Notes
The record gives the reactivity of an RNA of 177 nucleotides to 2A3 and DMS. DMS adducts were read by reverse transcription with MarathonRT. DMS (dimethyl sulfate) methylates the pairing face of unpaired adenines and cytosines. The data come from the RNA Mapping Database (RMDB), library OK2TRN. The RNA was probed in 150 mM KOAc, 10 mM MgCl2 and 150 mM bicine (pH 8.5) at 24 C. For 2A3, 1,541 sequencing reads were counted.

[RMDB]
RNA sequence: GGGAACGACUCGAGUAGAGUCGAAAAUCGUCGAGCACGACGGACGGUCGGUCACCUGGCUGGCGUGCGACGUGCCCUCGCUGGGCUGGCGGGUUUACCGGUUGGUGCCCGCCGACGAGGCGCCAGGCCAAUGACGAUGCUUCGGCAUCGUCAUUGGAAAAGAAACAACAACAACAAC
Reactivity to 2A3 in 0.01 (KOAc 150mM, MgCl2 10mM, bicine 150mM(pH8.5), 24C), signal-to-noise 2, nucleotides 027 to 126: u070c000g010u010c020g060a040g120c060a030c090g060a030c010g040g150a010c020g070g070u100c030g060g080u010c060a080c160c060u060g020g010c010u010g030g050c020g000u080g120c040g000a050c000g070u040g000c000c010c000u020c060g120c110u140g000g060g000c060u070g010g000c050g030g000g000u080u140u130a040c020c070g180g170u180u300g010g000u030g000c000c000c000g010c000c020g010a000c000g020a020g040g050c050g070c010c010a060g100g000
Reactivity to DMS in 0.01 (KOAc 150mM, MgCl2 10mM, bicine 150mM(pH8.5), 24C), signal-to-noise 1, nucleotides 027 to 126: u010c070g000u000c020g000a140g030c070a040c050g030a060c010g030g000a050c030g000g010u010c040g000g000u010c100a110c160c100u010g030g000c000u000g000g000c000g020u010g010c030g000a080c030g000u010g000c000c000c000u000c180g050c090u000g000g040g000c030u010g000g000c040g000g010g000u000u020u020a020c000c000g040g000u020u020g030g050u000g000c000c030c010g020c010c000g010a010c010g000a300g000g000c020g020c060c080a090g020g010